[RMDB]
RNA sequence: GGGAACGACUCGAGUAGAGUCGAAAACGACAGUUUCGACUGUCGAAAACCUUUGUGUUUACUAGUAUAUUGGAGCUAUGUGUAAUCCCAUUGGGAUUACCAUAGCUAUGAAGAUAUACGAAGUAAACACUCUGGUAAAUGCCUCCUUCGGGAGGCAGUUGCUCGUACUGUUCGCAGUACGAGCAACAAAAGAAACAACAACAACAAC
Reactivity to 2A3 in 0.01 (KOAc 150mM, MgCl2 10mM, bicine 150mM(pH8.5), 24C), signal-to-noise 2, nucleotides 027 to 156: c010g010a000c000a010g000u050u120u180c170g130a020c010u000g040u010c010g000a070a060a020a010c010c010u000u020u020g000u000g000u000u010u010a010c000u000a030g000u000a000u000a000u000u020g020g030a020g010c000u010a010u000g300u010g000u100a000a000u000c000c010c110a180u280u300g010g020g000a000u020u000a000c000c000a000u000a000g000c000u000a000u000g000a010a000g000a000u000a010u000a010c000g000a060a000g010u000a000a020a000c000a000c000u010c010u000g000g010u020a080a110a120u110g000c010c010u000c000c000u020u100c170g110g000g000a000g000g010c000a000

Structure probing data (2A3) for a 207-nucleotide construct. Conditions: 150 mM KOAc, 10 mM MgCl2 and 150 mM bicine (pH 8.5), 24 C. The 2A3 profile rests on 1,204 reads.